Annotation
This 207-nucleotide RNA was probed chemically with 2A3. The 2A3 profile rests on 504 reads. The reactions ran in a buffer of 150 mM KOAc, 10 mM MgCl2 and 150 mM bicine (pH 8.5), at 24 C.

RNA sequence: GGGAACGACUCGAGUAGAGUCGAAAAGGCAGGACUUACCAAGUCUGGGGGCCGAUGAGGGUUGGCUCAAAGUAGGGUUUUGACUUGUAAACUCAAGCUGUGACCCCAAAACGAUGGAGGUAAAUGAAAAAUCCAUCUGCCUUCGGGCAGAUGGAAACUCCUAUGAGUUGUUCGCAACUCAUAGGAGAAAAGAAACAACAACAACAAC
Reactivity to 2A3 in 0.01 (KOAc 150mM, MgCl2 10mM, bicine 150mM(pH8.5), 24C), signal-to-noise 1, nucleotides 027 to 156: g080g020c040a020g030g020a020c020u030u060a120c050c050a080a060g020u050c030u050g010g000g000g000g070c050c100g020a030u090g020a070g010g000g020u080u090g020g000c010u030c130a060a070a040g020u080a080g030g040g030u050u010u130u070g130a070c000u050u000g020u030a050a080a050c040u050c090a020a000g030c030u090g020u080g050a050c000c000c020c000a000a000a080a080c010g100a050u110g050g070a040g060g000u080a100a050a120u130g110a090a140a010a000a000u000c010c010a000u000c000u000g000c010c000u000u060c070g030g110g000c000a000g000a010u000g000g000a000a000a000